An RNA of 177 nucleotides, treated with 2A3 and DMS and read out base by base.
For DMS, 3,521 sequencing reads were counted.
For 2A3, 5,437 sequencing reads were counted.

RNA sequence: GGGAACGACUCGAGUAGAGUCGAAAAAAGCAAAUCCCCGCCGAGCCGGAGGCCGGACCUGAUCCGGCAGCAAUCUCGCACUUGCACAAAUCCAUAUUGCACUGCAAUAUGGACUGGGCGGGAAUGCGGUAUAAAUACAGUUCGCUGUAUUUAUACCAAAAGAAACAACAACAACAAC
Reactivity to 2A3 in 0.01 (KOAc 150mM, MgCl2 10mM, bicine 150mM(pH8.5), 24C), signal-to-noise 4, nucleotides 027 to 126: a000a010g080c060a070a070a040u030c000c010c000c000g000c010c000g050a020g050c020c040g060g030a020g080g020c030c040g030g040a030c000c070u130g040a210u010c010c000g080g010c000a000g000c000a000a060u020c020u010c060g000c010a110c070u030u080g030c060a020c040a110a100a030u000c000c000a000u010a010u010u010g000c130a150c300u260g000c000a000a000u000a000u010g000g010a000c000u000g000g010g000c000g000g000g020a020a010u010g000c030
Reactivity to DMS in 0.01 (KOAc 150mM, MgCl2 10mM, bicine 150mM(pH8.5), 24C), signal-to-noise 4, nucleotides 027 to 126: a070a070g000c060a050a080a150u000c020c010c000c200g040c030c010g010a070g010c090c050g010g010a170g010g000c020c020g000g000a020c100c140u000g000a150u000c010c000g000g010c010a120g000c040a050a070u000c010u010c070g000c050a080c140u000u010g010c120a140c160a060a070a200u000c000c010a010u010a010u000u000g000c000a210c280u000g010c000a000a020u000a000u000g000g000a010c040u000g010g010g000c010g020g020g000a020a030u000g030c060

Conditions: 150 mM KOAc, 10 mM MgCl2 and 150 mM bicine (pH 8.5), 24 C. It was measured as part of the RMDB library RFMREP. DMS adducts were read by reverse transcription with MarathonRT.